[RMDB]
RNA sequence: GGGAACGACUCGAGUAGAGUCGAAAAGGGGACGUUUUGGAUUCGACAGGGAUAGGUCGAGCUUGCGUUGCGAGCCGAGGGGUCGGCCUCGUAAAAACGCACAAGCCAAUAACUGGCAAAGAAAACAACAACUUCGCUCUAGCUGCAUAAGCUAAGCCUUUAGCAAUGUGUUCGCACAUUGCUAAAGAAAAGAAACAACAACAACAAC
Reactivity to 2A3 in 0.01 (KOAc 150mM, MgCl2 10mM, bicine 150mM(pH8.5), 24C), signal-to-noise 5, nucleotides 027 to 156: g010g000g010g010a030c060g000u020u000u070u060g080g010a080u080u060c040g020a030c050a070g060g020g010a020u060a050g040g010u020c050g020a020g000c050u040u040g010c010g080u050u070g020c010g010a000g000c010c010g010a060g010g050g010g020u150c000g000g050c000c010u000c000g000u020a080a060a010a020a000c020g050c000a020c020a070a060g000c010c000a030a070u160a140a100c120u060g000g000c050a020a090a020g080a020a130a010a030c070a030a000c020a050a060c050u100u070c060g030c010u030c030u020a010g000c000u040g000c040a090u040a300a010g000c000u000a010a010g010c000
Reactivity to DMS in 0.01 (KOAc 150mM, MgCl2 10mM, bicine 150mM(pH8.5), 24C), signal-to-noise 1, nucleotides 027 to 156: g000g020g000g040a130c050g010u000u000u020u000g000g000a210u010u000c090g060a070c010a130g030g010g000a110u000a040g000g080u030c060g000a040g010c030u000u000g040c020g010u010u010g020c040g010a020g020c000c040g000a040g000g000g020g010u000c030g070g000c080c010u000c050g040u010a040a110a050a060a040c060g020c000a100c050a130a010g020c010c030a110a100u010a060a090c030u000g040g020c000a060a050a090g010a100a080a040a090c010a050a090c040a070a120c040u000u000c040g040c000u000c020u000a100g000c000u020g000c100a100u000a170a080g040c030u000a050a070g020c090

Background:
This 207-nucleotide RNA was probed chemically with 2A3 and DMS. For DMS the reverse transcriptase was MarathonRT. Reactivities are given for positions 27 through 156. The RNA was probed in 150 mM KOAc, 10 mM MgCl2 and 150 mM bicine (pH 8.5) at 24 C. For DMS, 1,865 sequencing reads were counted.